The record gives the reactivity of an RNA of 177 nucleotides to 2A3.
The reactions ran in a buffer of 150 mM KOAc, 10 mM MgCl2 and 150 mM bicine (pH 8.5), at 24 C.
The data come from the RNA Mapping Database (RMDB), library RFM100.
RNA sequence: GGGAACGACUCGAGUAGAGUCGAAAAAUCUUCUUCAAGGAACGCUUCGUUCACCAUCAACUCAAUCAAAAUGACUCCCUGCUCCGCAACACCUGCUCCUGCUCCAGCGACUGCAACGGCUGCUCCUACUCCGCCACAGUUUCGACUGUGGCGGAGUAAAAGAAACAACAACAACAAC
Reactivity to 2A3 in 0.01 (KOAc 150mM, MgCl2 10mM, bicine 150mM(pH8.5), 24C), signal-to-noise 1, nucleotides 027 to 126: a010u020c020u110u000c000u040u070c010a070a100g110g000a090a010c040g020c040u080u050c020g020u000u030c000a080c070c000a070u070c010a020a110c010u030c070a020a030u040c020a000a100a000a100u110g010a040c020u000c000c000c000u000g040c010u010c000c000g050c020a040a040c010a030c040c000u020g010c010u010c000c000u000g010c000u000c020c000a000g000c020g050a030c030u030g000c000a010a010c040g030g020c030u000g030c040u000c000c000u000